[RMDB]
RNA sequence: GGGAACGACUCGAGUAGAGUCGAAAAUAACAUUACGAUGGGUUCCGGUCAGGAUAGUAAGGGCAUGGAGCAAGGCGUGAGGCAGAUCGUGAACGAUAUGUUCACCGAGGCUUUGAGCCAAAACGGGCGCAUUGCGAAGUUCGUCAAUGAGAAAACGUCGGUAGAGUUAGUUCGCUAACUCUACCGAAAAAGAAACAACAACAACAAC
Reactivity to DMS in 0.01 (KOAc 150mM, MgCl2 10mM, bicine 150mM(pH8.5), 24C), signal-to-noise 1, nucleotides 027 to 156: u010a080a220c010a060u010u010a100c010g010a180u040g000g070g000u020u000c040c060g030g040u000c040a070g010g000a140u000a090g030u000a040a060g040g010g020c040a070u010g000g010a210g010c070a030a110g030g020c050g000u020g010a130g050g040c040a040g000a110u010c050g040u000g010a020a030c000g060a200u000a190u030g010u010u070c000a030c040c010g010a210g000g000c020u000u000u000g010a080g070c020c000a020a060a040a070c040g000g000g010c050g010c070a150u010u000g000c000g030a090a200g020u010u000c070g000u000c030a030a160u000g000a190g000a050a030a080a080c070g010
Reactivity to 2A3 in 0.01 (KOAc 150mM, MgCl2 10mM, bicine 150mM(pH8.5), 24C), signal-to-noise 1, nucleotides 027 to 156: u120a070a030c100a070u100u160a020c020g010a020u050g010g020g040u120u030c010c050g000g000u000c110a080g040g020a050u050a000g120u020a050a100g040g000g000c050a060u060g030g000a020g020c060a020a000g040g000c070g020u130g010a040g000g000c000a010g020a090u080c030g010u000g030a030a030c050g110a080u060a050u300g000u000u030c000a000c000c110g030a000g060g020c000u040u030u070g010a010g000c000c000a000a050a000a080c100g000g000g060c040g000c060a030u000u060g000c000g020a090a020g020u050u030c030g050u060c000a040a120u000g030a000g070a160a080a000a000c030g050